This 177-nucleotide RNA was probed chemically with 2A3 and DMS. The RNA was probed in 150 mM KOAc, 10 mM MgCl2 and 150 mM bicine (pH 8.5) at 24 C. The DMS profile rests on 13,593 reads. For 2A3, 8,844 sequencing reads were counted. Source: RMDB library OK1LIB, as collected in RNAgym.

[RMDB]
RNA sequence: GGGAACGACUCGAGUAGAGUCGAAAAGUUCAGGCGUGCCCGGCAGCCAGUAGCCUCUGGCAGAUCUGACAGACGUGUGCGAUAAUACACACGCCCAUCGAGGCCAUGCCUACAUAAAAGGGCACCAAACGAAAACCAAAUUCGUUUGGUUUUCGUUAAAAGAAACAACAACAACAAC
Reactivity to 2A3 in 0.01 (KOAc 150mM, MgCl2 10mM, bicine 150mM(pH8.5), 24C), signal-to-noise 8, nucleotides 027 to 126: g030u070u060c040a020g050g060c080g060u040g000c000c010c000g040g020c020a020g050c050c030a020g030u070a020g040c010c020u030c020u020g020g000c020a010g050a170u090c110u110g030a030c010a050g070a040c020g000u000g010u020g050c050g110a150u120a230a050u200a170c000a010c000a000c000g030c020c000c000a070u110c050g030a050g020g020c020c010a030u130g000c000c030u050a050c030a030u230a030a100a020a000g020g000g000c020a020c010c000a030
Reactivity to DMS in 0.01 (KOAc 150mM, MgCl2 10mM, bicine 150mM(pH8.5), 24C), signal-to-noise 6, nucleotides 027 to 126: g020u030u010c050a060g010g010c120g030u010g000c010c010c010g010g020c080a100g010c070c020a050g010u020a120g010c140c080u010c030u010g000g000c020a090g010a120u010c020u010g020a050c110a140g010a120c010g030u000g010u000g000c110g020a140u020a100a100u040a260c000a000c000a010c010g000c020c010c030a170u030c090g010a110g000g000c010c060a080u010g000c070c020u000a080c150a080u020a020a050a120a100g000g000g030c010a030c050c200a060